[RMDB]
RNA sequence: GGGAACGACUCGAGUAGAGUCGAAAACGGAAGACCAUCAUUGGCCAGUGGCCGGGCGCUAACAGGUUCCAGCCCCCCACCAGUGCCGCUCGAACAUGCGGUGCAACCCAUUCGCAGGCCGGCAGGGGCCGUGAGACAUAUUCGUAUGUCUCACGGCAAAAGAAACAACAACAACAAC
Reactivity to DMS in 0.01 (KOAc 150mM, MgCl2 10mM, bicine 150mM(pH8.5), 24C), signal-to-noise 2, nucleotides 027 to 126: c060g020g020a190a080g020a070c020c030a080u010c090a100u000u020g010g010c000c020a160g020u010g010g010c020c060g010g000g030c000g050c070u010a070a060c120a070g010g000u000u000c040c030a160g000c030c000c000c000c020c040a120c120c110a110g010u010g000c030c010g000c010u010c110g010a090a090c160a080u000g010c070g000g000u000g000c070a080a180c060c050c010a100u000u010c130g010c060a110g010g000c020c010g000g020c070a070g000g000g000